[RMDB]
RNA sequence: GGGAACGACUCGAGUAGAGUCGAAAAGCGCCCCGUCAUUGGGGAGUAGCCGCUCUUCACCGCGAAGAGGCUUGCGUCAACACACUUGGUCCAUCGGACCAUGGCGCAGGCAGCUCCUGGCCUGGCAUGUCAUGUGCCAAUUCGUUGGCACAUGACAAAAAGAAACAACAACAACAAC
Reactivity to DMS in 0.01 (KOAc 150mM, MgCl2 10mM, bicine 150mM(pH8.5), 24C), signal-to-noise 3, nucleotides 027 to 126: g020c060g010c010c010c000c000g010u010c270a090u030u060g000g000g000g040a080g020u010a100g010c070c090g030c010u000c040u000u000c040a140c080c120g000c080g000a060a050g010a030g000g010c030u040u000g010c030g010u000c000a050a060c130a140c270a050c300u010u000g000g000u010c000c000a180u030c200g010g000a000c000c000a030u010g010g000c000g000c010a010g000g030c000a100g000c020u000c000c060u000g010g000c020c020u010g000g010c040a190
Reactivity to 2A3 in 0.01 (KOAc 150mM, MgCl2 10mM, bicine 150mM(pH8.5), 24C), signal-to-noise 4, nucleotides 027 to 126: g050c030g070c000c000c000c000g080u080c060a150u120u280g010g010g000g010a000g020u050a030g000c000c010g020c010u000c000u000u040c040a070c080c040g060c090g070a030a000g020a010g020g000c000u000u010g000c000g010u000c020a090a000c070a020c040a020c240u040u100g000g000u000c010c040a250u170c270g000g000a010c000c000a010u000g000g000c010g000c010a000g020g000c000a000g020c000u010c000c000u020g030g000c000c030u010g020g000c040a050
The record gives the reactivity of an RNA of 177 nucleotides to DMS and 2A3. The reactions ran in a buffer of 150 mM KOAc, 10 mM MgCl2 and 150 mM bicine (pH 8.5), at 24 C. Values cover nucleotides 27 to 126. For DMS the reverse transcriptase was MarathonRT. The data come from the RNA Mapping Database (RMDB), libraries RFM100 and RFMREP.